[RMDB]
RNA sequence: GGGAACGACUCGAGUAGAGUCGAAAACAAAACAACAAACAAACGAUGAGAAGUUCGUGAAACGGUCAAAGAAAAGACCGAGACCAAUCCACGUAAGGUCCGCGAGCAAACGUCGAAUAUGUGGAUAGCUGUCACAAUGGUUCGCCAUUGUGACAGCAAAAGAAACAACAACAACAAC
Reactivity to 2A3 in 0.01 (KOAc 150mM, MgCl2 10mM, bicine 150mM(pH8.5), 24C), signal-to-noise 2, nucleotides 027 to 126: c010a000a050a010a000c090a030a000c010a040a220a000c000a030a140a010c060g010a000u050g000a060g070a250a010g040u010u020c020g000u010g050a030a070a040c030g030g000u000c010a060a050a170g160a090a140a100a060g010a040c010c000g000a020g000a000c000c000a000a010u100c070c030a070c080g010u090a070a120g000g000u010c000c000g010c010g000a000g030c040a140a030a000c010g010u000c000g060a090a070u230a120u110g050u080g000g000a030u010a070
Structure probing data (2A3) for a 177-nucleotide construct. It was measured as part of the RMDB library OK1LIB. The 2A3 profile rests on 1,283 reads. The reactions ran in a buffer of 150 mM KOAc, 10 mM MgCl2 and 150 mM bicine (pH 8.5), at 24 C. Reactivities are rounded to 0.1 and cut off at 0 and 3.